[RMDB]
RNA sequence: GGGAACGACUCGAGUAGAGUCGAAAAAUGUAAGCUCGUUCCUGUAAAAAGGUUCCCUGGAAUGCACUUACGGUGAAACUCGGUGCCGAUGUUAUUCCGAAGAUAAUCAUCAAUCACAUCCGCAUCAUCAUCAUCAUUAUCCGCUUUUGCAGGGAAAACCGGUAAUUACUUUCGAGUAAUUACCGGUAAAAGAAACAACAACAACAAC
Reactivity to 2A3 in 0.01 (KOAc 150mM, MgCl2 10mM, bicine 150mM(pH8.5), 24C), signal-to-noise 4, nucleotides 027 to 156: a000u170g040u120a060a020g040c070u010c030g020u030u030c000c000u040g090u090a080a160a060a040a050g070g040u040u000c000c010c000u010g000g040a030a020u050g000c030a010c090u100u190a040c160g020g000u020g010a120a080a080c050u030c180g000g000u000g000c010c010g000a000u000g010u010u000a010u060u050c140c110g030a030a020g040a130u290a180a120u210c100a000u050c030a030a030u000c000a000c000a010u000c020c030g000c010a000u000c010a000u020c010a010u000c000a000u000c020a010u010u160a050u180c050c040g010c030u060u070u030u110g120c000a000g000g000g050a000a050a040
Reactivity to DMS in 0.01 (KOAc 150mM, MgCl2 10mM, bicine 150mM(pH8.5), 24C), signal-to-noise 1, nucleotides 027 to 156: a100u010g000u000a090a060g030c050u010c050g040u000u000c000c010u000g000u030a020a030a080a090a050g000g000u010u010c010c000c000u000g010g000a040a040u010g020c020a030c030u010u000a110c130g060g040u000g010a060a070a160c180u010c050g020g060u000g050c000c130g000a060u010g020u000u000a060u000u000c070c020g000a150a170g030a150u000a060a130u010c100a200u000c050a080a030u010c080a060c010a030u000c060c060g000c010a000u010c050a150u000c050a250u000c030a000u010c000a040u000u000a080u010c030c010g010c040u000u000u000u000g030c000a110g010g030g030a020a030a110
The data come from the RNA Mapping Database (RMDB), library OK3TST. Structure probing data (2A3 and DMS) for a 207-nucleotide construct. The reactions ran in a buffer of 150 mM KOAc, 10 mM MgCl2 and 150 mM bicine (pH 8.5), at 24 C. DMS adducts were read by reverse transcription with MarathonRT.